[RMDB]
RNA sequence: GGGAACGACUCGAGUAGAGUCGAAAAUCUGAGCACCCCAUCUUUACUGAGAUGCCACUGUCCACCCAUAAGCAUUCUCACGCCCACCUGUUUAGUUCCCUGUCAUGAUUUGUAGCCACAGGUGACUGGCAUUUGCAGGACUUCAGUGUCAGUAAGCUGUGGCUCUCUAAUUCGUUAGAGAGCCACAAAAAGAAACAACAACAACAAC
Reactivity to 2A3 in 0.01 (KOAc 150mM, MgCl2 10mM, bicine 150mM(pH8.5), 24C), signal-to-noise 1, nucleotides 027 to 156: u020c020u050g020a040g020c050a070c030c030c030c010a000u020c000u000u090u090a140c090u070g040a010g000a030u030g010c040c030a030c000u010g020u020c020c010a060c100c020c000a050u030a190a000g000c000a090u210u050c060u030c020a020c050g060c010c000c000a040c020c000u010g040u040u100u020a040g000u040u080c030c000c010u030g080u090c040a080u040g080a160u080u140u110g030u070a020g050c070c010a050c050a000g010g020u010g040a010c100u050g000g010c020a000u060u050u080g020c020a010g000g050a050c050u030u050c130a000g000u000g000u000c020a010g050u080a060a010g030c040
Reactivity to DMS in 0.01 (KOAc 150mM, MgCl2 10mM, bicine 150mM(pH8.5), 24C), signal-to-noise 2, nucleotides 027 to 156: u000c020u000g020a170g020c020a160c000c020c000c040a110u000c050u000u000u000a070c090u010g010a110g010a050u010g060c000c030a070c100u000g030u020c030c030a140c000c040c060a130u010a070a100g010c040a070u000u010c080u000c050a090c070g000c020c000c010a060c040c010u000g030u010u000u010a100g030u000u000c020c010c010u000g100u000c080a090u000g000a120u010u000u010g000u000a090g000c030c040a070c030a050g030g000u010g010a080c010u000g010g030c010a050u000u020u010g030c030a120g030g000a080c070u010u010c020a110g000u000g030u000c030a050g020u000a070a110g040c060

Description: This 207-nucleotide RNA was probed chemically with 2A3 and DMS. For DMS the reverse transcriptase was MarathonRT. For 2A3, 694 sequencing reads were counted. For DMS, 3,193 sequencing reads were counted. The RNA was probed in 150 mM KOAc, 10 mM MgCl2 and 150 mM bicine (pH 8.5) at 24 C. It was measured as part of the RMDB library OK3TST.